[RMDB]
RNA sequence: GGGAACGACUCGAGUAGAGUCGAAAACAAUAAUUGACAUAUCUGCAUAUAACGAGCGAACAGUCAAAGGCGUUCCGGCAUGGCUGCCUCUUGGGAUUAUGAGCAAUUUUGAAUAUCCUUUAGCUCAGAACUUGUUGUGAUUCGUCACAACAAGUUCAAAAGAAACAACAACAACAAC
Reactivity to 2A3 in 0.01 (KOAc 150mM, MgCl2 10mM, bicine 150mM(pH8.5), 24C), signal-to-noise 5, nucleotides 027 to 126: c020a000a020u130a140a080u040u020g010a010c000a000u140a030u040c040u120g100c080a020u170a040u050a250a100c070g030a020g020c060g030a070a070c020a040g010u010c000a040a070a030g120g000c050g030u110u050c040c010g060g010c060a060u050g020g000c000u020g000c000c000u020c010u040u080g050g020g000a020u090u070a050u130g090a060g020c020a000a010u000u020u020u140g060a100a060u100a090u080c000c000u060u100u130a050g010c030u020c060a030
Reactivity to DMS in 0.01 (KOAc 150mM, MgCl2 10mM, bicine 150mM(pH8.5), 24C), signal-to-noise 2, nucleotides 027 to 126: c050a120a100u070a000a020u010u000g000a020c030a020u010a070u000c030u020g040c120a080u030a090u010a110a120c160g000a040g000c020g060a080a070c070a060g000u010c010a010a100a080g000g000c010g000u010u020c100c060g010g050c060a090u000g010g060c070u010g000c040c020u000c020u010u010g050g000g000a020u000u040a050u000g020a100g040c000a010a010u000u010u000u010g000a070a020u010a060u000c060c020u030u020u030a100g000c040u000c080a160
Conditions: 150 mM KOAc, 10 mM MgCl2 and 150 mM bicine (pH 8.5), 24 C. Chemical mapping of a 177-nucleotide RNA with 2A3 and DMS.